The data come from the RNA Mapping Database (RMDB), library OK1LIB. Structure probing data (2A3) for a 177-nucleotide construct.

[RMDB]
RNA sequence: GGGAACGACUCGAGUAGAGUCGAAAACGUACACGAGACGAUUCUCGUAUAGAAGAUUCUCUUUGAGUAGAUUCUUGUACACGUGAGGAUUCGCGUGUGGUAUUUUUUAUUUCUCUUCUCAAAUCAACCCAGAGCAAUCGUUCGCGAUUGCUCUGGGAAAAGAAACAACAACAACAAC
Reactivity to 2A3 in 0.01 (KOAc 150mM, MgCl2 10mM, bicine 150mM(pH8.5), 24C), signal-to-noise 2, nucleotides 027 to 126: c050g070u070a000c000a000c040g040a040g090a030c100g020a050u200u070c050u020c000g040u010a040u000a040g030a070a000g000a000u080u000c020u020c000u090u210u290g070a020g000u110a010g000a070u070u000c000u020u100g170u130a020c040a000c040g030u040g020a040g070g070a200u020u110c010g000c030g020u000g000u070g010g000u020a180u000u100u000u040u000u060a080u070u160u000c050u000c000u180u050c040u030c070a100a200a140u140c080a080a050